[RMDB]
RNA sequence: GGGAACGACUCGAGUAGAGUCGAAAACGGCGGUCCUUGGACUAACAGCCCCAAAAACGGCCAGUAGUUUUCUUGGCUGAUUUGCUGUUGGCAUGGGGGCGUCCCAUAGCUGGGAGGUCCGUAUUGGCGAUAAAUAUAAAUUCGUUUAUAUUUAUCGAAAAGAAACAACAACAACAAC
Reactivity to DMS in 0.01 (KOAc 150mM, MgCl2 10mM, bicine 150mM(pH8.5), 24C), signal-to-noise 2, nucleotides 027 to 126: c090g000g020c100g010g020u010c010c030u000u020g010g000a100c010u010a070a110c080a070g020c020c120c010c070a100a080a020a050a120c040g010g010c010c000a040g000u010a050g000u010u020u040u020c020u010u000g000g000c040u010g000a300u010u010u010g000c020u000g000u000u010g000g010c020a200u010g000g000g000g000g000c000g000u000c000c000c030a090u060a300g000c300u000g000g000g000a030g000g000u010c000c000g000u000a020u020u000g000g010
Reactivity to 2A3 in 0.01 (KOAc 150mM, MgCl2 10mM, bicine 150mM(pH8.5), 24C), signal-to-noise 1, nucleotides 027 to 126: c020g040g010c030g010g020u010c010c000u000u070g040g020a060c000u010a040a000c010a020g020c020c000c000c000a000a060a100a030a010c030g000g000c010c010a010g020u060a030g020u020u030u070u060c060u070u070g090g030c070u030g060a190u030u030u090g010c010u000g010u070u040g020g000c040a050u070g000g000g000g000g000c000g080u000c000c000c000a040u120a030g020c070u040g000g000g000a030g080g000u030c000c020g020u070a210u240u210g030g020
An RNA of 177 nucleotides, treated with DMS and 2A3 and read out base by base. The RNA was probed in 150 mM KOAc, 10 mM MgCl2 and 150 mM bicine (pH 8.5) at 24 C. For DMS, 5,803 sequencing reads were counted. Reactivities are given for positions 27 through 126. It was measured as part of the RMDB library OK1LIB.